[RMDB]
RNA sequence: GGGAACGACUCGAGUAGAGUCGAAAAGAACAGUUGCGAACUCACAGCAGAAAAAAAUAAAAAUCUGUACGAGAGACUGAACACUUGGAAAAAAGCAUACAGAUUGUCUUCUGGUGAAAAGGACACCGAAUACAACGAACUCAGAGGAAUCUUCCUCCUCACAAAACAAGUUCGCUUGUUUUGUGAGAAAAGAAACAACAACAACAAC
Reactivity to 2A3 in 0.01 (KOAc 150mM, MgCl2 10mM, bicine 150mM(pH8.5), 24C), signal-to-noise 1, nucleotides 027 to 156: g010a070a050c000a020g000u040u010g010c040g070a090a070c040u000c020a050c090a020g090c040a040g010a110a110a010a060a000a000a040u300a150a150a120a030a050u020c000u020g040u070a090c090g020a020g010a000g020a050c050u040g050a130a000c040a040c090u050u080g000g090a200a000a000a000a000a000g030c070a060u150a210c060a090g110a250u010u020g000u040c040u010u000c070u090g090g000u000g020a130a210a130a110g070g010a020c010a000c010c000g000a020a000u020a040c090a070a000c000g060a060a030c050u110c200a020g000a000g030g050a170a170u050c030u100u010c040c000u000c000